[RMDB]
RNA sequence: GGGAACGACUCGAGUAGAGUCGAAAAGGGGUCAGGUGGGAGUACAGCCCCGACUCGAGGAUCAUACUGAAGCCUCCACGGUAUGGGAGAGUCGCGCUGUACUUUGAUCACCUGACGGAGGCACCCAAACGAACGUCCAGUUCGCUGGACGUUCGAAUCAGUGUUAAACCUUCGGGUUUAACACUGAAAAAGAAACAACAACAACAAC
Reactivity to 2A3 in 0.01 (KOAc 150mM, MgCl2 10mM, bicine 150mM(pH8.5), 24C), signal-to-noise 2, nucleotides 027 to 156: g040g020g060g000u000c000a010g000g000u000g000g010g010a040g000u010a000c010a000g020c030c030c060c060g010a000c000u000c000g030a300g000g020a000u010c000a000u000a000c000u020g030a100a020g000c010c000u000c000c000a000c000g010g000u000a000u010g000g000g000a020g000a000g010u000c000g010c010g000c020u000g000u000a000c000u260u170u050g010a010u010c000a000c000c000u000g000a000c000g000g010a000g010g000c000a030c000c010c000a050a100a000c030g000a000a000c000g000u000c000c000a010g020u060u080c260g110c130u000g000g000a000c000g000u000u000c000g010a000a040